[RMDB]
This 207-nucleotide RNA was probed chemically with 2A3. 2A3 adducts were read by reverse transcription with SuperScript II with manganese. It was measured as part of the RMDB library ARCHII. The RNA was probed in 150 mM KOAc, 10 mM MgCl2 and 150 mM bicine (pH 8.5) at 24 C.

RNA sequence: GGGAACGACUCGAGUAGAGUCGAAAAGUGGCGCCAACUUGUCACGGAUACGCUUCUGUCCGGGUAGUAAGGUGUGAGGGCUGUGGCAUGCGUGGUGGUGUCACUAUCCCCAGGAUGUGGAUGGCGCGUCCAUCUCAAACCAGGAGUCGACAUUGGGCCUCCUAAAGAUGUUCGCAUCUUUAGGAGGAAAAGAAACAACAACAACAAC
Reactivity to 2A3 in 0.01 (KOAc 150mM, MgCl2 10mM, bicine 150mM(pH8.5), 24C), signal-to-noise 1, nucleotides 027 to 156: g000u000g000g010c010g010c020c000a020a040c090u030u020g010u010c000a000c000g000g000a160u170a040c140g010c070u070u000c020u160g190u020c040c060g160g010g030u230a210g090u190a140a060g030g050u100g060u070g100a100g040g020g020c050u040g000u020g000g000c040a040u060g060c110g070u170g020g020u030g010g000u000g030u000c000a000c000u020a040u000c000c010c010c000a010g000g010a050u110g090u160g060g000a010u010g010g000c140g080c080g210u120c000c000a020u000c000u000c000a090a140a100c010c000a020g030g030a100g050u090c040g040a010c030a040u030u160g000g060g010